[RMDB]
RNA sequence: GGGAACGACUCGAGUAGAGUCGAAAAGAAGAGAAAGGAGACACACGGACAGUCUCCAGAGGUUCCUAAGGUCUCGAUCGCGCCUGCCGGGAAUCAUGGACUCCCGGUUGUCCAUGAAAGAAGAAGACACCUGGUCCUAGUUCGCUAGGACCAGGUGAAAAGAAACAACAACAACAAC
Reactivity to 2A3 in 0.01 (KOAc 150mM, MgCl2 10mM, bicine 150mM(pH8.5), 24C), signal-to-noise 2, nucleotides 027 to 126: g040a040a000g040a000g050a020a050a000g020g000a000g000a000c040a000c030a080c220g080g070a000c100a060g010u010c000u010c020c000a000g000a000g000g000u040u090c010c000u080a110a150g060g020u020c000u000c020g050a040u050c080g010c040g000c030c000u070g000c040c000g130g000g000a020a090u120c110a060u090g000g010a010c050u010c020c010c020g000g010u100u110g000u000c000c000a000u060g050a050a070a050g100a070a000g080a030a000g040a050
Reactivity to DMS in 0.01 (KOAc 150mM, MgCl2 10mM, bicine 150mM(pH8.5), 24C), signal-to-noise 2, nucleotides 027 to 126: g010a200a090g010a170g000a000a230a170g010g000a010g020a000c000a060c300a120c070g000g000a100c140a130g000u010c010u000c010c040a040g000a080g030g040u040u000c020c000u000a030a060g000g000u010c010u000c020g000a080u000c010g010c110g000c060c010u010g010c050c010g050g000g000a070a070u000c110a150u000g000g000a010c020u000c040c090c010g020g000u000u010g000u000c000c000a040u000g020a110a080a110g030a070a100g030a070a160g050a150

Source: RMDB library OK1LIB, as collected in RNAgym. The record gives the reactivity of an RNA of 177 nucleotides to 2A3 and DMS. In probing experiments dimethyl sulfate is read out at A N1 and C N3, which are open when not base-paired. The 2A3 profile rests on 1,008 reads. The reactions ran in a buffer of 150 mM KOAc, 10 mM MgCl2 and 150 mM bicine (pH 8.5), at 24 C.